[RMDB]
RNA sequence: GGGAACGACUCGAGUAGAGUCGAAAACUUCUCUCGUCUUCUUCGGUCAACCUCCGAAGUUCCUCUUCCUCUUCCCUGCUGAGGGACUUUCCCCCGGAGGAGAGCUGCCUCUUCUUGUUCUCCAGGGCUACUUUAGGCUUCGGCCUAAAGAAAAGAAACAACAACAACAAC
Reactivity to 2A3 in 0.01 (KOAc 150mM, MgCl2 10mM, bicine 150mM(pH8.5), 24C), signal-to-noise 9, nucleotides 027 to 129: c020u110u030c010u010c010u020c020g070u010c040u090u010c010u030u030c040g000g020u060c060a090a070c040c010u040c010c020g040a040a020g010u010u010c010c000u020c000u040u020c000c030u050c030u050u030c000c000c000u020g030c050u050g030a050g000g010g010a020c000u060u080u070c010c000c000c000c030g030g020a020g040g010a030g010a010g020c050u080g040c010c000u050c000u080u020c010u050u080g040u050u010c030u000c010c010a030g030g020g010c010u060a060
Reactivity to DMS in 0.01 (KOAc 150mM, MgCl2 10mM, bicine 150mM(pH8.5), 24C), signal-to-noise 6, nucleotides 027 to 129: c120u020u010c000u000c000u030c000g020u020c030u020u020c000u000u000c090g000g040u030c070a080a160c060c030u020c020c020g010a040a030g000u000u020c040c020u000c030u010u000c030c030u030c100u000u000c020c010c020u040g030c060u000g010a030g000g000g000a000c040u000u000u010c000c000c000c000c000g000g000a040g000g000a050g000a010g000c060u030g030c040c010u040c020u000u000c050u000u000g020u040u020c000u040c000c070a090g000g010g010c080u000a060